Chemical mapping of a 177-nucleotide RNA with DMS and 2A3. It was measured as part of the RMDB library M2PK90. The DMS profile rests on 2,664 reads. The RNA was probed in 150 mM KOAc, 10 mM MgCl2 and 150 mM bicine (pH 8.5) at 24 C.
[RMDB]
RNA sequence: GGGAACGACUCGAGUAGAGUCGAAAAAGCAACGAGUGUGUGUGGGACGUUUUAUCCCAAGCUCUGAGUAGACCACGCGCUCACACACACCGCGAGCGAGCAUCAGCAGAGCGCAAACGCUGGUAAACCUAAUACUGCGGUUCGCCGCAGUAUUAGGAAAAGAAACAACAACAACAAC
Reactivity to DMS in 0.01 (KOAc 150mM, MgCl2 10mM, bicine 150mM(pH8.5), 24C), signal-to-noise 3, nucleotides 027 to 126: a100g020c040a170a050c030g000a260g030u010g020u000g020u000g020u000g010g020g000a050c050g010u000u000u010u000a150u020c020c010c030a110a080g000c110u000c050u000g000a090g020u020a040g010a070c110c110a050c040g000c060g020c010u000c010a020c000a010c000a010c010a020c020c000g020c020g000a190g000c030g010a110g010c110a040u010c030a040g010c020a090g010a100g000c050g000c110a030a070a080c140g000c010u000g000g020u010a070a070a140
Reactivity to 2A3 in 0.01 (KOAc 150mM, MgCl2 10mM, bicine 150mM(pH8.5), 24C), signal-to-noise 2, nucleotides 027 to 126: a000g060c040a040a040c020g040a120g040u000g000u000g010u000g000u000g030g000g000a040c000g020u040u060u100u180a120u050c000c020c010a000a030g030c000u010c040u140g150a100g060u210a010g110a040c000c040a020c050g030c020g000c010u020c000a010c000a000c000a000c000a000c010c010g020c010g020a050g000c020g000a020g000c020a020u020c010a000g000c020a010g030a030g130c110g000c070a140a050a000c050g000c010u020g060g000u060a070a040a000